[RMDB]
RNA sequence: GGGAACGACUCGAGUAGAGUCGAAAAUGCAGGCUGUACAAGCAUGGCACCACCAUCUGCUCAGCUUCUGGUGAGGGCCUGAGAAAGCUCACAGUCAUGAUGGAAGGUGAAGCGAGAGCAGGCAUACCACUUGGUGACAGCAGGAGCAAGAGAGAGACAUAGGUUCAGACUUCGGUCUGAACCUAUGAAAAGAAACAACAACAACAAC
Reactivity to DMS in 0.01 (KOAc 150mM, MgCl2 10mM, bicine 150mM(pH8.5), 24C), signal-to-noise 1, nucleotides 027 to 156: u010g080c000a090g030g050c010u000g020u010a160c120a140a070g020c030a130u000g010g010c050a170c010c030a060c030c090a120u000c030u020g020c010u040c000a210g000c000u000u000c000u050g050g000u000g040a220g030g000g030c000c030u050g010a120g010a300a140a220g010c010u040c030a050c060a070g000u010c110a180u000g000a100u000g000g000a080a110g010g030u000g000a060a110g000c000g000a170g000a300g040c030a010g000g010c050a090u000a100c000c010a060c000u000u000g030g030u010g040a110c020a040g070c050a000g000g000a050g000c050a030a070g000a130g000a190g010a140g010a190
Reactivity to 2A3 in 0.01 (KOAc 150mM, MgCl2 10mM, bicine 150mM(pH8.5), 24C), signal-to-noise 3, nucleotides 027 to 156: u120g000c020a030g120g010c020u060g030u180a080c100a170a030g010c040a090u100g050g000c060a010c060c000a030c030c010a030u010c010u020g010c010u010c050a030g010c000u030u020c010u030g210g020u050g030a150g010g130g020c000c000u040g000a050g100a050a060a000g000c000u010c000a030c010a050g080u060c030a050u150g150a070u170g100g120a070a030g060g030u030g030a130a000g000c020g020a050g020a030g120c000a010g000g000c010a070u160a080c000c000a120c090u110u240g030g000u060g060a050c010a010g020c010a020g010g040a020g000c020a090a010g020a000g000a000g000a000g010a040